Background
An RNA of 177 nucleotides, treated with DMS and 2A3 and read out base by base.
[RMDB]
RNA sequence: GGGAACGACUCGAGUAGAGUCGAAAAAUUUGACAUCAGCUGCUUCAGCAAAUGAGAGUGGAUGUUGCAGCCAUUCCUGCCGCCAUAACUGAUGAUCUCUGCGAGGUGUUCACCAGUCUCCCAGGGACAUUACCCAUCCGUUCGCGGAUGGGUAAUGAAAAGAAACAACAACAACAAC
Reactivity to DMS in 0.01 (KOAc 150mM, MgCl2 10mM, bicine 150mM(pH8.5), 24C), signal-to-noise 2, nucleotides 027 to 126: a140u000u000u010g000a120c040a040u010c040a060g000c030u000g010c110u000u000c070a060g020c040a060a090a090u010g010a090g000a080g020u000g000g000a080u000g000u000u000g000c100a060g000c030c030a090u000u000c040c020u000g000c060c050g000c030c100a030u000a050a090c070u020g000a060u010g010a100u010c010u040c000u000g020c300g020a050g030g000u000g010u000u010c060a080c030c040a140g000u000c050u000c010c060c010a080g010g010g010a150
Reactivity to 2A3 in 0.01 (KOAc 150mM, MgCl2 10mM, bicine 150mM(pH8.5), 24C), signal-to-noise 2, nucleotides 027 to 126: a000u140u090u130g040a010c020a020u050c020a000g050c040u080g020c010u200u100c040a010g000c090a110a170a170u240g010a100g000a030g060u060g020g060a070u040g030u120u090g010c020a000g010c020c020a040u070u040c000c010u000g070c000c010g000c050c020a060u060a210a070c010u020g050a070u060g070a100u050c020u000c000u030g010c000g030a000g000g040u040g050u070u050c160a150c130c020a020g000u000c010u030c040c060c000a020g000g020g010a000
Values are in units of 0.01, from 0 to 300, in steps of 10.
Conditions: 150 mM KOAc, 10 mM MgCl2 and 150 mM bicine (pH 8.5), 24 C.
For DMS the reverse transcriptase was MarathonRT.
The 2A3 profile rests on 1,373 reads.
Reactivities are given for positions 27 through 126.